Structure probing data (DMS and 2A3) for a 177-nucleotide construct. It was measured as part of the RMDB library M2PK50. 2A3 adducts were read by reverse transcription with SuperScript II with manganese. Conditions: 150 mM KOAc, 10 mM MgCl2 and 150 mM bicine (pH 8.5), 24 C.
RNA sequence: GGGAACGACUCGAGUAGAGUCGAAAACCACAGAUCUUCGGAUCUGUGGAAACAACAAAUACUGUCAGUUGAGACAGUCACAAAUACAUUGAGUGUACAAUGAAAGCGAUUGCUUCGGCAAUCGCAACCUCAGAGUUGAGUUCGCUCAACUCUGAGGAAAAGAAACAACAACAACAAC
Reactivity to DMS in 0.01 (KOAc 150mM, MgCl2 10mM, bicine 150mM(pH8.5), 24C), signal-to-noise 1, nucleotides 027 to 126: c000c020a020c000a000g000a020u010c000u000u040c300g040g000a000u000c000u030g030u000g000g010a000a070a030c150a130a080c150a160a120a080u020a030c030u000g030u000c030a140g010u020u020g030a120g010a050c010a000g000u000c190a050c080a090a120a050u000a160c020a030u000u000g000a140g000u000g000u000a110c110a050a080u000g060a060a070a150g000c000g020a000u010u000g020c020u000u010c160g020g000c000a000a000u000c000g020c000a000a030
Reactivity to 2A3 in 0.01 (KOAc 150mM, MgCl2 10mM, bicine 150mM(pH8.5), 24C), signal-to-noise 3, nucleotides 027 to 126: c000c000a000c010a010g000a010u010c000u070u120c230g100g000a000u020c000u000g000u030g000g000a040a040a010c030a020a020c050a010a100a060u160a090c000u010g000u020c010a140g040u200u140g230a080g010a080c000a000g010u020c010a070c030a040a170a040u270a030c030a020u080u070g060a060g170u170g030u100a050c000a040a010u070g110a220a090a040g020c010g010a000u020u010g000c000u020u080c210g060g000c000a000a000u000c000g000c000a000a010